Overview:
An RNA of 177 nucleotides, treated with DMS and 2A3 and read out base by base.
RNA sequence: GGGAACGACUCGAGUAGAGUCGAAAACAUAGGGAGUUCGCUCCCUAUGAAAAUGCCGGCUGCAAGAAAAGUGCUUCAAACAGUGGGAGCACUGCCGAAAAAAAAGGGCGAUGUUCGCAUCGCCCAAUCAAGUUGUUUACUUCGGUAAACAACUUGAAAAAGAAACAACAACAACAAC
Reactivity to DMS in 0.01 (KOAc 150mM, MgCl2 10mM, bicine 150mM(pH8.5), 24C), signal-to-noise 1, nucleotides 027 to 126: c030a000u000a020g010g000g000a030g020u000u000c270g010c000u000c000c000c010u000a000u010g000a040a030a110a040u030g010c100c060g000g000c010u000g060c090a170a070g000a120a120a100a040g010u000g020c000u000u000c020a090a130a060c250a160g010u010g030g000g000a000g000c000a000c000u000g000c000c020g000a000a000a000a090a050a090a200a170g010g000g010c000g030a020u000g010u000u000c210g030c000a000u000c010g010c000c000c000a030a030
Reactivity to 2A3 in 0.01 (KOAc 150mM, MgCl2 10mM, bicine 150mM(pH8.5), 24C), signal-to-noise 1, nucleotides 027 to 126: c000a000u010a010g030g000g010a000g010u030u100c110g090c090u030c000c010c010u000a000u000g000a000a000a000a030u120g050c050c010g030g000c030u090g020c130a090a060g070a150a230a070a030g010u000g030c000u000u020c020a070a220a200c080a190g080u160g070g090g040a000g000c000a010c010u000g010c010c000g160a150a000a000a000a000a060a000a030g000g000g020c010g000a000u000g000u010u120c230g000c080a000u000c000g000c000c000c000a000a010

The DMS profile rests on 826 reads. 2A3 adducts were read by reverse transcription with SuperScript II with manganese. The reactions ran in a buffer of 150 mM KOAc, 10 mM MgCl2 and 150 mM bicine (pH 8.5), at 24 C. For DMS the reverse transcriptase was MarathonRT. Reactivities are given for positions 27 through 126.